[RMDB]
RNA sequence: GGGAACGACUCGAGUAGAGUCGAAAAAUAGCGACUUUAGGAAUUGUUGCAGGCUGAGAACGAGCGACUAAACGGUUUGGAGGAUAACUGAUUUAGGGACUUUCUUUAUACCUCUAUAAAAUCGAAGAGUGUGGGAAAUUUUCGAAUUUCCCACACUAAAAGAAACAACAACAACAAC
Reactivity to DMS in 0.01 (KOAc 150mM, MgCl2 10mM, bicine 150mM(pH8.5), 24C), signal-to-noise 3, nucleotides 027 to 126: a090u010a070g010c030g000a050c030u000u000u010a090g020g010a070a120u010u030g010u010u030g000c120a120g010g020c070u030g000a090g040a070a090c170g000a050g010c000g040a220c040u020a060a060a040c050g000g000u000u010u010g000g000a070g010g010a090u020a020a040c030u010g000a100u000u020u010a050g010g000g010a120c080u010u000u020c010u000u000u030a050u030a100c010c000u000c060u000a080u040a070a020a060a090u050c020g000a150a090g000
Reactivity to 2A3 in 0.01 (KOAc 150mM, MgCl2 10mM, bicine 150mM(pH8.5), 24C), signal-to-noise 3, nucleotides 027 to 126: a000u140a010g020c010g050a050c040u110u100u160a050g030g130a100a070u050u100g040u030u060g030c060a060g040g000c010u050g000a030g080a110a030c040g020a030g060c010g040a040c020u020a000a100a020c040g000g070u040u000u050g110g000a070g020g000a030u060a090a010c040u010g070a140u070u010u100a030g000g010g070a020c020u070u060u010c020u050u080u030a070u040a060c000c000u000c000u000a010u170a130a100a020a030u120c030g030a100a050g080